[RMDB]
RNA sequence: GGGAACGACUCGAGUAGAGUCGAAAACUUUUGAUCGGGUCACAUCACAGAUACUCGAUGGAGGGGGAUGUCCCAGAAGAACUCAGUGAAGAUGGAUUGCCAUGGCCUCCAGUUUUUCGUUGAGCCACUACCCGAGGUAGUUCGCUACCUCGGGUAGAAAAGAAACAACAACAACAAC
Reactivity to DMS in 0.01 (KOAc 150mM, MgCl2 10mM, bicine 150mM(pH8.5), 24C), signal-to-noise 2, nucleotides 027 to 126: c040u040u000u000u010g000a000u020c030g010g020g000u000c170a110c180a020u000c150a130c180a100g000a110u030a010c010u000c010g020a020u000g020g000a040g030g000g030g000g000a300u050g000u000c000c000c040a090g000a090a090g010a120a110c060u000c030a010g010u010g000a040a020g000a020u020g000g000a010u000u020g030c020c060a090u030g010g020c030c160u000c000c000a030g000u020u020u000u000u000c020g010u020u000g010a090g000c080c060a150
Reactivity to 2A3 in 0.01 (KOAc 150mM, MgCl2 10mM, bicine 150mM(pH8.5), 24C), signal-to-noise 3, nucleotides 027 to 126: c020u020u090u030u080g140a040u020c010g040g000g000u040c070a030c020a180u130c040a090c040a170g090a060u170a080c000u000c010g050a040u010g110g020a030g010g030g010g030g030a070u050g050u040c000c000c010a010g080a030a010g040a000a000c010u010c040a020g010u010g050a020a010g060a070u010g060g000a020u090u160g030c030c090a070u160g150g000c000c030u000c000c010a040g040u090u070u010u020u020c020g010u000u000g000a010g060c040c030a090